Record summary
The record gives the reactivity of an RNA of 177 nucleotides to DMS and 2A3. DMS adducts were read by reverse transcription with MarathonRT.
RNA sequence: GGGAACGACUCGAGUAGAGUCGAAAAUUACGCGCAGUCGCUGCUGUUUAAUCGGGCGGCAGUAGGCGUAGUGCAACAGUUGCGUACCGACGUGAUGGAUGCUGCGUUACGCCAGCCAUUAAGCGAGGCGUGACUUGAGCUUCGGCUCAAGUCACGCAAAAGAAACAACAACAACAAC
Reactivity to DMS in 0.01 (KOAc 150mM, MgCl2 10mM, bicine 150mM(pH8.5), 24C), signal-to-noise 1, nucleotides 027 to 126: u000u000a120c070g000c000g010c030a050g010u000c000g000c000u000g000c000u000g020u000u010u000a060a200u020c190g010g020g020c060g010g040c000a090g010u000a130g000g000c000g020u000a010g000u000g000c010a020a000c000a040g000u000u010g010c010g020u020a130c300c300g020a000c000g000u000g030a050u000g000g000a180u000g000c060u000g020c010g000u010u000a040c020g020c010c000a150g010c020c020a050u010u000a140a140g010c020g040a010g010
Reactivity to 2A3 in 0.01 (KOAc 150mM, MgCl2 10mM, bicine 150mM(pH8.5), 24C), signal-to-noise 2, nucleotides 027 to 126: u080u050a010c080g010c000g010c040a020g060u050c020g000c040u120g010c030u080g100u030u100u150a190a140u200c080g030g050g000c030g010g000c000a010g040u050a040g000g080c010g000u000a030g070u020g000c000a060a080c020a020g000u000u020g030c030g020u060a230c040c140g200a030c070g040u000g000a000u000g040g180a110u140g020c030u000g000c000g000u000u010a010c040g000c000c000a010g040c040c010a070u130u120a080a000g020c050g050a000g080
For DMS, 751 sequencing reads were counted. The RNA was probed in 150 mM KOAc, 10 mM MgCl2 and 150 mM bicine (pH 8.5) at 24 C.